[RMDB]
RNA sequence: GGGAACGACUCGAGUAGAGUCGAAAAACGAGAUGGGCUGAUAGAGACAUGAAGAGAACACGUGCAUAACUGGAAACAGUAGCUUGUAGGGCAUGCAGACGCAAGUAGAAAGCACGUUCAAGAUUUGACUACCCUUAACCUUCGGGUUAAGGGUAGUAAAAGAAACAACAACAACAAC
Reactivity to DMS in 0.01 (KOAc 150mM, MgCl2 10mM, bicine 150mM(pH8.5), 24C), signal-to-noise 2, nucleotides 027 to 126: a150c080g020a050g010a080u000g000g000g020c030u000g020a070u000a070g010a050g010a070c080a080u000g000a090a060g020a140g000a070a090c160a040c010g040u000g010c020a030u000a090a020c000u000g020g000a190a080a130c010a000g020u000a300g020c030u020u000g000u000a120g000g010g030c050a060u000g000c140a060g010a070c050g000c040a010a010g030u000a000g010a050a070a170g000c000a000c010g030u000u010c090a060a070g000a140u000u000u000g000
Reactivity to 2A3 in 0.01 (KOAc 150mM, MgCl2 10mM, bicine 150mM(pH8.5), 24C), signal-to-noise 1, nucleotides 027 to 126: a030c040g000a040g010a040u040g030g000g000c000u060g020a070u080a050g170a010g010a050c020a090u210g040a070a070g060a000g050a100a010c020a010c090g040u020g010c010a030u030a220a000c000u050g050g000a060a000a030c010a000g000u020a000g030c020u000u030g040u080a040g040g090g030c030a020u140g000c060a020g000a050c060g000c010a000a030g000u020a000g090a030a060a000g050c020a000c000g000u010u000c020a010a020g000a080u010u030u190g020